Conditions: 150 mM KOAc, 10 mM MgCl2 and 150 mM bicine (pH 8.5), 24 C. Structure probing data (2A3 and DMS) for a 207-nucleotide construct. For DMS, 11,046 sequencing reads were counted.
[RMDB]
RNA sequence: GGGAACGACUCGAGUAGAGUCGAAAAAGUGCCGCCUCAGUUCCAAGCUCUUUCGUGGCACUGUAAACAGUCCUAUUGAGUUAGGGGCAGUCAACCACGUUGCGAAGCUAAAUUAUCUGGUCGAGAGUUACGAUUCCCUACUUCGGUAGGGAAUCAAACGAGAUAAUGGAUUCGUCCAUUAUCUCGUAAAAGAAACAACAACAACAAC
Reactivity to 2A3 in 0.01 (KOAc 150mM, MgCl2 10mM, bicine 150mM(pH8.5), 24C), signal-to-noise 5, nucleotides 027 to 156: a000g070u060g040c020c020g050c020c000u070c010a050g020u080u090c060c020a060a040g010c020u020c010u040u060u080c040g010u060g020g000c080a010c000u000g010u050a160a170a040c060a080g120u100c010c010u030a050u050u150g130a160g200u010u050a040g010g010g030g000c000a010g020u030c030a010a050c020c020a040c020g020u040u030g050c080g120a070a030g010c030u080a080a140a150u150u120a090u080c080u060g020g040u060c040g040a010g000a010g160u100u100a060c060g000a000u000u010c000c000c000u000a000c000u010u050c150g030g000u000a000g020g000g000a000a000u000c000a000a010
Reactivity to DMS in 0.01 (KOAc 150mM, MgCl2 10mM, bicine 150mM(pH8.5), 24C), signal-to-noise 4, nucleotides 027 to 156: a040g000u000g020c020c010g030c010c020u010c030a120g000u010u000c050c050a110a300g000c020u000c020u010u010u010c040g020u010g020g010c020a030c000u030g000u000a040a120a070c050a130g000u010c010c000u000a060u000u000g010a230g020u000u000a060g010g030g000g000c000a030g000u000c030a060a050c000c020a050c050g010u010u000g010c070g010a090a150g010c070u000a040a040a050u000u010a070u000c040u000g010g010u000c030g010a130g000a150g000u000u000a080c120g010a050u000u000c000c000c000u000a010c000u000u010c300g070g000u000a010g010g010g010a010a000u000c000a020a060